[RMDB]
This 177-nucleotide RNA was probed chemically with 2A3 and DMS. In probing experiments dimethyl sulfate is read out at A N1 and C N3, which are open when not base-paired.

RNA sequence: GGGAACGACUCGAGUAGAGUCGAAAAGAUAUGGAGUUAUCCGUGAUGGACGAAGAACUCUAAGUUAAUAGCUUCGGAAACGAAGCUAUUAACUUAGAGGGAGUCCGCACGGAGUAACUCCUAAGUCCAUUAUAUCGUGGUUCGCCACGAUAUAAUGAAAAGAAACAACAACAACAAC
Reactivity to 2A3 in 0.01 (KOAc 150mM, MgCl2 10mM, bicine 150mM(pH8.5), 24C), signal-to-noise 2, nucleotides 027 to 126: g070a040u130a070u300g000g020a000g020u020u010a000u000c000c020g000u020g040a300u300g030g000a000c040g260a300a150g010a040a000c010u030c000u010a000a000g000u000u000a010a000u020a000g000c000u000u000c030g020g010a080a060a030c000g020a000a000g000c000u000a000u000u000a010a000c000u000u000a000g000a000g010g000g000a000g010u000c010c000g000c010a010c000g000g010a010g000u010a000a000c000u000c000c000u000a050a000g010u070c010
Reactivity to DMS in 0.01 (KOAc 150mM, MgCl2 10mM, bicine 150mM(pH8.5), 24C), signal-to-noise 3, nucleotides 027 to 126: g000a100u010a300u020g000g010a020g010u010u000a020u000c000c000g010u000g010a090u000g030g010a020c000g000a140a180g010a140a240c010u000c000u010a000a020g000u010u000a010a010u000a010g020c000u000u000c010g010g000a110a110a180c020g010a000a000g000c000u010a000u000u000a000a000c000u010u000a000g000a020g000g010g000a080g000u000c000c000g000c000a000c000g010g000a040g010u000a020a000c010u000c000c000u000a010a070g010u000c030
It was measured as part of the RMDB library TTRINS. Conditions: 150 mM KOAc, 10 mM MgCl2 and 150 mM bicine (pH 8.5), 24 C.